An RNA of 177 nucleotides, treated with DMS and 2A3 and read out base by base.
The 2A3 profile rests on 664 reads.
For 2A3 the reverse transcriptase was SuperScript II with manganese.

RNA sequence: GGGAACGACUCGAGUAGAGUCGAAAAUUGCUUGGUUGUCUUAUGGUAUUUACCCACUUUUGAACAAACCAAUCAUGAUUACAGGUGCUUCUUACGGUACGCUUGGUUCAUCUCGUGCCCAAUUGCACUUUCUGUCGAACUUCGGUUCGACAGAAAGAAAAGAAACAACAACAACAAC
Reactivity to DMS in 0.01 (KOAc 150mM, MgCl2 10mM, bicine 150mM(pH8.5), 24C), signal-to-noise 1, nucleotides 027 to 126: u000u000g000c140u000u020g000g000u000u010g020u000c050u000u000a050u030g010g020u020a080u010u000u020a110c190c060c050a070c170u000u000u030u020g020a090a030c030a090a020a060c010c000a020a020u000c000a000u000g010a180u000u000a110c140a050g020g010u000g000c030u000u000c140u000u000a060c200g010g000u000a030c020g000c190u000u000g020g030u010u010c110a040u000c020u000c050g000u000g000c020c010c050a070a090u000u000g000c080a110
Reactivity to 2A3 in 0.01 (KOAc 150mM, MgCl2 10mM, bicine 150mM(pH8.5), 24C), signal-to-noise 1, nucleotides 027 to 126: u090u030g020c010u000u000g010g030u000u050g000u070c000u040u060a080u090g030g020u030a300u110u150u150a120c000c030c000a100c090u000u000u040u130g020a060a030c060a130a080a060c010c020a010a000u010c030a000u090g060a080u030u200a040c000a060g060g000u010g010c020u000u150c010u130u130a020c030g050g080u070a010c030g020c090u070u050g040g020u060u000c020a030u050c070u000c020g000u020g000c010c000c000a100a030u160u080g000c050a020